Structure probing data (2A3 and DMS) for a 177-nucleotide construct. The DMS profile rests on 3,101 reads.
RNA sequence: GGGAACGACUCGAGUAGAGUCGAAAAGGGUUACCCUUCGGGGUAACCCAUACCUCCUCGCGGUGCGGCGCCGGCCCCGCCGGGAAGGCCGCCUUUACCUCCUAAAGGAAUCAUUCGUGAUUCCUAAAUCAGUACAAAGGUUCGCCUUUGUACUGAUAAAAGAAACAACAACAACAAC
Reactivity to 2A3 in 0.01 (KOAc 150mM, MgCl2 10mM, bicine 150mM(pH8.5), 24C), signal-to-noise 2, nucleotides 027 to 126: g000g010g010u070u070a000c000c000c060u020u080c290g030g010g030g000u000a000a010c000c010c010a000u000a000c000c010u000c000c010u040c010g090c040g030g020u110g030c010g010g010c040g030c050c000g020g000c030c050c060c210g030c010c000g020g020g010a030a020g150g000c000c030g010c010c000u080u080u070a040c010c020u050c010c040u150a220a150a010g000g000a000a000u000c010a000u040u090c100g100u020g000a000u000u020c000c000u000a020a060
Reactivity to DMS in 0.01 (KOAc 150mM, MgCl2 10mM, bicine 150mM(pH8.5), 24C), signal-to-noise 3, nucleotides 027 to 126: g000g010g000u000u010a000c000c000c000u000u010c180g040g020g020g010u000a000a020c010c000c000a020u000a030c130c060u000c030c020u000c080g020c140g000g020u000g010c080g020g010c030g010c030c030g000g000c020c080c110c170g010c070c050g010g000g010a060a080g010g010c020c050g000c000c050u000u000u000a140c070c020u000c030c040u000a060a120a040g000g000a010a000u000c000a040u000u000c180g010u010g000a000u000u000c000c000u010a000a040
For 2A3, 3,133 sequencing reads were counted.